[RMDB]
The data come from the RNA Mapping Database (RMDB), library M2RFPK.
The record gives the reactivity of an RNA of 207 nucleotides to DMS and 2A3.
Conditions: 150 mM KOAc, 10 mM MgCl2 and 150 mM bicine (pH 8.5), 24 C.
DMS (dimethyl sulfate) methylates the pairing face of unpaired adenines and cytosines.
2A3 adducts were read by reverse transcription with SuperScript II with manganese.
The DMS profile rests on 4,251 reads.
For 2A3, 2,228 sequencing reads were counted.
RNA sequence: GGGAACGACUCGAGUAGAGUCGAAAAAUACAAGGGGAGUUUUCGGCCAAAUGUUGUAUGCAGAAAGCGUGAGGAAGGUAGCACUUAGACACUCACGAGUAGCGGUUCGGCAGUAGUGCUAAAAUGAGACAGUACGAAAAGUUCGCUUUUCGUACAAGUAAUCACUUAGCUUCGGCUAAGUGAUUACAAAAGAAACAACAACAACAAC
Reactivity to DMS in 0.01 (KOAc 150mM, MgCl2 10mM, bicine 150mM(pH8.5), 24C), signal-to-noise 2, nucleotides 027 to 156: a060u000a040c010a080a110g020g000g000g010a180g010u000u000u000u020c000g020g000c050c040a060a070a110u000g020u000u000g000u000a090u000g030c000a110g020a060a060a070g030c060g010u020g000a070g040g020a050a080g000g030u010a080g020c040a030c090u000u000a120g010a080c060a080c050u000c040a070c090g010a090g010u000a090g020c060g000g020u000u000c080g010g000c070a100g010u000a040g040u000g010c050u000a030a020a070a080u000g000a180g000a090c080a080g040u000a010c010g010a020a020a010a020g010u000u000c290g010c010u020u000u000u000c000g010u010a000c000a000a100
Reactivity to 2A3 in 0.01 (KOAc 150mM, MgCl2 10mM, bicine 150mM(pH8.5), 24C), signal-to-noise 3, nucleotides 027 to 156: a000u130a040c090a060a070g020g010g000g010a050g020u040u020u020u090c040g060g030c020c020a060a070a070u040g020u020u030g020u060a070u090g050c040a020g100a110a060a010g030c040g020u020g010a020g040g040a060a030g060g000u070a020g020c030a010c100u030u080a020g010a020c020a010c060u030c010a010c040g010a020g050u070a010g010c050g020g020u060u050c030g020g000c000a050g010u070a000g020u000g000c030u070a050a040a010a040u120g000a020g020a040c080a060g010u000a000c000g000a000a000a000a000g020u030u090c240g030c050u000u000u000u000c000g000u000a000c000a000a000